Description
An RNA of 177 nucleotides, treated with DMS and 2A3 and read out base by base.

RNA sequence: GGGAACGACUCGAGUAGAGUCGAAAACUAUGCAGAUUCGUCUGCAUAGAGACCCGAUGAAGCGGCAGUUACACAGCUUCAUACACGUAAGAAGUGCAAUAAAGGGACGAGGGUUCGCCCUCGUCAAGGUGGAGAUAUUGUUCGCAAUAUCUCCACCAAAAGAAACAACAACAACAAC
Reactivity to DMS in 0.01 (KOAc 150mM, MgCl2 10mM, bicine 150mM(pH8.5), 24C), signal-to-noise 3, nucleotides 027 to 126: c010u000a000u000g010c010a000g000a030u000u010c180g010u000c000u000g000c000a010u000a000g000a090g010a170c020c000c010g000a070u000g000a020a010g000c010g010g030c080a110g010u010u010a080c140a070c050a070g000c020u010u000c010a020u000a100c040a030c060g000u010a110a100g000a180a140g000u000g000c180a050a050u030a030a080a120g000g030g010a000c000g010a030g000g000g010u000u000c250g000c000c000c010u000c000g000u000c000a020a020
Reactivity to 2A3 in 0.01 (KOAc 150mM, MgCl2 10mM, bicine 150mM(pH8.5), 24C), signal-to-noise 4, nucleotides 027 to 126: c000u020a000u000g000c000a010g010a050u030u090c120g130u000c080u000g000c000a000u000a000g000a010g010a020c000c000c030g000a050u040g000a010a010g000c010g090g010c160a130g100u170u130a170c170a020c010a060g010c000u000u010c000a000u030a010c040a000c020g040u040a050a040g090a170a030g110u020g060c050a040a130u230a230a110a070g180g070g000a010c010g010a000g020g000g000u030u030c170g120c020c000c010u000c000g010u000c000a000a010